RNA sequence: GGGAACGACUCGAGUAGAGUCGAAAAACUCGCCGACAGCGAGCAAUCAGCAGUAAAUCAUCCACAUGCUGCUGAGUGUAAGUGCGAUAACCACUUUCAGAGCGCAAUGGAGGGGUGAUGAGACCUACUGGCAGCGUGGAUUCGUCCACGCUGCCAGAAAAGAAACAACAACAACAAC
Reactivity to 2A3 in 0.01 (KOAc 150mM, MgCl2 10mM, bicine 150mM(pH8.5), 24C), signal-to-noise 1, nucleotides 027 to 126: a020c020u040c000g050c030c030g240a050c040a050g020c000g010a000g090c000a000a110u080c050a010g010c040a000g000u050a000a140a120u030c020a030u040c040c050a020c000a040u060g000c010u000g010c020u020g050a040g030u060g030u040a050a020g020u010g050c020g030a020u080a180a120c010c000a030c040u020u110u130c090a020g040a060g090c080g000c080a040a220u190g020g010a090g090g000g000g010u020g030a020u060g040a050g020a050c000c040u130a060
Reactivity to DMS in 0.01 (KOAc 150mM, MgCl2 10mM, bicine 150mM(pH8.5), 24C), signal-to-noise 1, nucleotides 027 to 126: a150c020u000c020g030c000c040g000a140c270a230g040c010g000a050g040c020a130a100u000c000a020g010c000a020g000u000a180a090a030u000c170a010u020c060c030a020c110a120u020g040c000u000g090c010u020g000a080g070u000g000u000a030a000g000u000g000c170g000a120u030a100a080c300c010a000c000u010u010u010c030a050g020a100g040c030g000c190a210a140u000g000g030a170g000g000g000g020u000g000a030u000g000a140g000a040c050c140u000a180